[RMDB]
Chemical mapping of a 177-nucleotide RNA with 2A3 and DMS.
The RNA was probed in 150 mM KOAc, 10 mM MgCl2 and 150 mM bicine (pH 8.5) at 24 C.
The 2A3 profile rests on 3,630 reads.
It was measured as part of the RMDB library RFM100.
RNA sequence: GGGAACGACUCGAGUAGAGUCGAAAAAGAUACCGCCCUAGUUUUAACCAUAAAAGAUGCCAGCUAGCAAUUGGGUGUAGCUACUUUAAUCGAUCAUUCAUUCAGUCGCUUCCCGGGAAACCAAAGCUUCGUAUCCAAAGUUCGCUUUGGAUACGAAAAAAGAAACAACAACAACAAC
Reactivity to 2A3 in 0.01 (KOAc 150mM, MgCl2 10mM, bicine 150mM(pH8.5), 24C), signal-to-noise 6, nucleotides 027 to 126: a000g030a050u050a020c020c040g010c000c000c010u010a090g010u010u040u080u110a090a070c050c030a090u160a180a160a040a040g070a050u120g040c010c030a030g060c070u080a020g010c050a110a170u150u100g010g030g000u020g010u030a030g010c040u030a020c020u050u040u070a130a100u030c010g010a010u030c020a080u100u090c010a010u020u000c010a020g010u000c000g070c170u000u020c000c000c020g010g030g010a070a050a010c040c040a040a060a010g040c040
Reactivity to DMS in 0.01 (KOAc 150mM, MgCl2 10mM, bicine 150mM(pH8.5), 24C), signal-to-noise 2, nucleotides 027 to 126: a160g070a170u020a000c060c040g010c000c000c030u000a090g020u000u010u020u000a100a190c240c040a140u030a100a030a060a130g000a220u000g000c090c080a070g000c070u020a070g000c040a020a080u040u000g040g000g000u000g000u070a090g000c060u030a030c000u010u000u050a150a080u000c030g000a020u020c070a130u030u000c040a080u010u060c040a000g000u030c010g000c300u010u020c000c020c000g000g000g010a050a020a070c050c010a080a050a100g000c070